RNA sequence: GGGAACGACUCGAGUAGAGUCGAAAAAAUUACGGGUGCCAGGCGCCCGCGUGACCCAUCAUCCGUUUUGCAUUGGAUUCGUAAAGAUGUCACGUCCGCCGCGGACAUAGAAACCCAAGCAAAGGCGCAUAAUAGCCUGAUUCGUCAGGCUAUUAUGAAAAGAAACAACAACAACAAC
Reactivity to DMS in 0.01 (KOAc 150mM, MgCl2 10mM, bicine 150mM(pH8.5), 24C), signal-to-noise 6, nucleotides 027 to 126: a060a080u020u010a080c020g010g000g020u000g010c030c130a190g040g010c020g020c030c010c040g020c070g010u000g000a120c020c020c010a150u010c140a110u010c110c030g010u000u000u000u010g010c040a120u000u000g010g010a060u000u000c050g010u000a090a120a110g010a050u000g000u000c010a100c020g000u000c070c140g010c110c110g030c020g010g000a020c010a010u000a060g000a070a040a070c030c000c010a030a050g010c040a020a030a060g010g010c120g010
Reactivity to 2A3 in 0.01 (KOAc 150mM, MgCl2 10mM, bicine 150mM(pH8.5), 24C), signal-to-noise 4, nucleotides 027 to 126: a010a000u140u100a040c010g000g020g000u020g030c070c110a150g150g050c020g010c000c050c000g000c030g030u060g050a070c010c050c000a040u060c010a020u040c030c040g010u040u060u060u070g140c190a210u030u050g030g000a020u030u040c030g070u130a030a080a150g150a050u040g010u030c030a020c300g020u060c050c060g060c030c010g000c040g000g000a000c000a000u020a000g040a030a040a000c000c010c010a000a010g000c000a020a020a050g080g010c050g000